[RMDB]
RNA sequence: GGGAACGACUCGAGUAGAGUCGAAAACACUAGUUGGAGGGGCCUGCUUCCUUGAUGUGCUUGUCCUGGUACCGGGCAUGCAUACACAGCAAUGUACUGGUGAAAUCAAUCGGGGAGAAUUCCCUACCACGCAACUAAUCUUCGGAUUAGUUGCGUGAAAAGAAACAACAACAACAAC
Reactivity to DMS in 0.01 (KOAc 150mM, MgCl2 10mM, bicine 150mM(pH8.5), 24C), signal-to-noise 2, nucleotides 027 to 126: c050a120c040u010a090g000u000u010g000g010a140g010g000g010g000c150c080u020g000c050u020u000c050c010u010u010g000a050u000g030u000g010c010u000u000g000u000c000c020u020g020g050u010a090c040c110g000g000g000c030a030u000g000c030a060u000a110c130a080c130a060g000c060a070a090u000g030u000a070c070u000g000g050u010g010a030a080a110u000c070a080a060u010c020g010g010g010g010a120g000a070a130u000u000c000c000c010u000a100c180
Reactivity to 2A3 in 0.01 (KOAc 150mM, MgCl2 10mM, bicine 150mM(pH8.5), 24C), signal-to-noise 2, nucleotides 027 to 126: c000a000c020u070a010g040u050u090g110g030a010g020g030g000g000c000c060u070g020c010u050u030c000c000u040u110g070a060u030g000u030g010c020u050u040g040u130c010c040u090g130g110u110a100c070c040g000g020g000c030a030u010g030c010a030u040a070c030a000c010a010g040c010a100a250u120g050u040a130c020u000g030g000u050g050a100a120a060u130c070a040a040u090c080g000g040g000g000a060g020a030a080u070u030c030c020c000u030a070c000
Structure probing data (DMS and 2A3) for a 177-nucleotide construct.
DMS adducts were read by reverse transcription with MarathonRT.
The 2A3 profile rests on 1,326 reads.
Values cover nucleotides 27 to 126.
The reactions ran in a buffer of 150 mM KOAc, 10 mM MgCl2 and 150 mM bicine (pH 8.5), at 24 C.
For 2A3 the reverse transcriptase was SuperScript II with manganese.